An RNA of 177 nucleotides, treated with DMS and 2A3 and read out base by base. It was measured as part of the RMDB library OK2TRN. Conditions: 150 mM KOAc, 10 mM MgCl2 and 150 mM bicine (pH 8.5), 24 C. The 2A3 profile rests on 902 reads. For DMS the reverse transcriptase was MarathonRT. Values cover nucleotides 27 to 126.
[RMDB]
RNA sequence: GGGAACGACUCGAGUAGAGUCGAAAAUAUACGGCAUUACGCGAUUAUACGUAUAUACGAUGCAUAUGCUAUAAUUAUACGCGCGCGAUGCUAGCGCGCAUUACGUAAUGCAUUAUAAUAUGCCGCGACUGUCCGAUACCUUCGGGUAUCGGACAGUAAAAGAAACAACAACAACAAC
Reactivity to DMS in 0.01 (KOAc 150mM, MgCl2 10mM, bicine 150mM(pH8.5), 24C), signal-to-noise 1, nucleotides 027 to 126: u000a050u010a040c090g000g010c000a000u000u000a000c010g010c300g000a030u000u000a010u000a010c200g010u000a020u000a000u000a040c140g000a140u000g000c110a040u000a000u000g000c030u000a000u000a010a040u000u000a150u010a070c120g000c000g000c000g000c000g010a140u000g070c230u030a050g000c010g000c000g010c060a000u000u030a140c060g010u000a000a030u000g000c000a000u000u000a010u000a010a010u000a120u000g010c030c030g000c100g000
Reactivity to 2A3 in 0.01 (KOAc 150mM, MgCl2 10mM, bicine 150mM(pH8.5), 24C), signal-to-noise 1, nucleotides 027 to 126: u060a000u000a020c060g020g000c010a000u010u010a000c000g020c100g080a000u030u030a020u010a040c110g040u000a000u000a010u010a000c090g200a190u190g030c100a010u030a000u100g010c010u050a020u000a060a000u080u050a040u060a070c060g030c000g030c010g020c010g120a040u300g150c120u060a040g000c010g050c000g020c030a000u040u070a010c010g000u000a000a000u020g000c000a000u030u000a000u010a030a060u160a080u100g100c000c040g130c080g080